[RMDB]
RNA sequence: GGGAACGACUCGAGUAGAGUCGAAAAACCGGUUCCGACCCCGGUCUUGGCCAGGGUUGCCGAGACCGCUGUCGCGGCAGUGAUCGAUGCGCCGGUAAGGGUGGCGGUCGCCCGGAAGCCCGUGGCGGGCGACCACACCCUUCGGGGUGUGGUCGCCAAAAGAAACAACAACAACAAC
Reactivity to 2A3 in 0.01 (KOAc 150mM, MgCl2 10mM, bicine 150mM(pH8.5), 24C), signal-to-noise 2, nucleotides 027 to 126: a000c000c000g020g010u170u100c030c060g010a050c000c010c040c000g050g000u040c040u120u170g060g000c000c090a150g080g040g000u080u100g010c000c000g020a010g000a010c020c010g000c000u010g010u030c050g030c050g090g000c070a180g040u030g100a160u250c230g110a060u180g140c020g020c010c000g010g020u010a100a110g130g010g000u000g030g030c030g000g010u000c000g050c050c000c020g000g020a060a020g040c000c090c010g190u020g000g000c040g000